[RMDB]
RNA sequence: GGGAACGACUCGAGUAGAGUCGAAAAAGCUAGCGGACACAUUUUCUGUGUGACCUGUGGGAUGCUUUAGGAAUUGCUGAUCUUCAUGUUCAUUUAGAAUUGUACCCAUUAGCACUGGAACGCUGUACUGGGCACUGGUUUUACACCGUUUGCAGGAUAAAAUAUCAUAGUUCGCUAUGAUAUUUUAAAAAGAAACAACAACAACAAC
Reactivity to DMS in 0.01 (KOAc 150mM, MgCl2 10mM, bicine 150mM(pH8.5), 24C), signal-to-noise 5, nucleotides 027 to 156: a090g020c030u000a070g020c040g020g010a180c030a050c030a040u010u000u000u010c100u010g020u000g020u000g000a060c040c030u010g030u000g020g010g010a110u000g020c040u000u010u000a100g020g010a100a080u010u000g020c030u000g010a130u000c030u000u000c040a080u000g010u000u000c030a110u000u000u000a090g010a040a080u000u000g020u000a070c030c010c010a090u000u000a070g030c030a150c060u000g010g010a070a100c070g020c040u010g010u000a070c090u010g030g010g020c040a060c050u010g020g010u000u000u000u010a080c060a080c030c020g000u000u000u000g020c030a130g020g020a300
Reactivity to 2A3 in 0.01 (KOAc 150mM, MgCl2 10mM, bicine 150mM(pH8.5), 24C), signal-to-noise 7, nucleotides 027 to 156: a000g030c030u060a010g020c030g050g040a010c010a010c010a080u100u110u130u090c100u070g040u010g010u020g050a090c020c030u050g010u070g050g030g020a030u060g020c030u120u060u090a110g060g070a150a100u130u080g010c020u040g020a060u050c010u090u040c050a060u080g040u040u060c020a070u100u100u140a070g040a120a070u070u040g030u090a080c010c000c010a020u030u060a020g010c020a020c080u020g040g020a060a000c030g010c030u020g010u080a050c030u020g010g010g000c030a020c040u020g020g030u010u010u030u110a050c070a020c020c010g020u010u060u110g020c020a010g010g040a040